Chemical mapping of a 207-nucleotide RNA with 2A3. 2A3 adducts were read by reverse transcription with SuperScript II with manganese.

[RMDB]
RNA sequence: GGGAACGACUCGAGUAGAGUCGAAAACAGGCUUGGGAAGGGCCUCCCUCGGAGAGCUGAGAGCAGAACUAGGAACAGGGACGGUGGUUUCAGGCUCUGGCGCCUCCACCUGCUAAGGAGGUGACAUGGACACAUUCCUUACCUUCUCGGACCCUCGGGGAAUUAUCCCAUUCGUGGGAUAAUUCCCAAAAGAAACAACAACAACAAC
Reactivity to 2A3 in 0.01 (KOAc 150mM, MgCl2 10mM, bicine 150mM(pH8.5), 24C), signal-to-noise 2, nucleotides 027 to 156: c020a010g040g060c000u150u220g020g000g010a010a040g000g010g000c000c010u030c000c000c010u020c080g000g000a060g000a020g000c030u110g090a030g010a010g130c020a030g070a120a060c050u110a120g050g050a110a100c030a060g010g020g040a060c070g110g020u060g010g000u000u080u050c030a050g000g060c000u020c000u010g030g030c000g030c030c000u020c000c000a080c000c060u060g060c040u120a050a100g000g000a000g010g000u030g000a030c050a070u140g010g010a020c030a000c030a270u040u030c000c000u000u080a040c000c020u050u020c010u040c010g110g020a110c020c000c060u110c080g030

The RNA was probed in 150 mM KOAc, 10 mM MgCl2 and 150 mM bicine (pH 8.5) at 24 C.